RNA sequence: GGGAACGACUCGAGUAGAGUCGAAAAUCUGAUCAUUCCGUGUCAAUCCACUAUUAUGGCACGGCGUGUUAAAAGGGAGGAAGGGUCAGACCGCAGGACUUGCGGUGCGGUAUUGUGGAGACAUACCGGGGAUUAUUAGCUUCGGCUAAUAAUCCCCAAAAGAAACAACAACAACAAC
Reactivity to DMS in 0.01 (KOAc 150mM, MgCl2 10mM, bicine 150mM(pH8.5), 24C), signal-to-noise 2, nucleotides 027 to 126: u040c050u010g000a140u000c000a040u010u000c000c030g000u000g000u010c020a000a100u030c180c170a080c150u040a070u060u030a140u000g040g000c000a020c000g010g000c040g030u000g070u040u000a070a090a050a070g000g000g000a100g020g050a160a130g000g000g010u000c110a110g000a030c010c000g000c000a020g000g020a120c210u000u000g060c000g020g000u000g010c110g040g000u040a100u010u000g010u000g000g000a170g030a120c090a050u040a000c100c060
Reactivity to 2A3 in 0.01 (KOAc 150mM, MgCl2 10mM, bicine 150mM(pH8.5), 24C), signal-to-noise 2, nucleotides 027 to 126: u090c020u030g010a070u050c000a010u020u000c000c000g000u000g000u000c030a010a130u010c070c040a070c110u160a170u300u160a120u090g000g000c000a010c000g000g000c000g000u060g000u010u040a130a220a030a000g030g110g040a100g060g030a100a040g010g050g020u050c020a050g020a010c010c010g060c000a000g050g080a180c070u190u050g020c000g000g000u010g000c010g000g000u030a100u060u180g020u070g070g090a040g010a060c100a010u150a030c010c080
An RNA of 177 nucleotides, treated with DMS and 2A3 and read out base by base.
The reactions ran in a buffer of 150 mM KOAc, 10 mM MgCl2 and 150 mM bicine (pH 8.5), at 24 C.
The DMS profile rests on 1,585 reads.
2A3 adducts were read by reverse transcription with SuperScript II with manganese.
Source: RMDB library RFM100, as collected in RNAgym.
Reactivities are given for positions 27 through 126.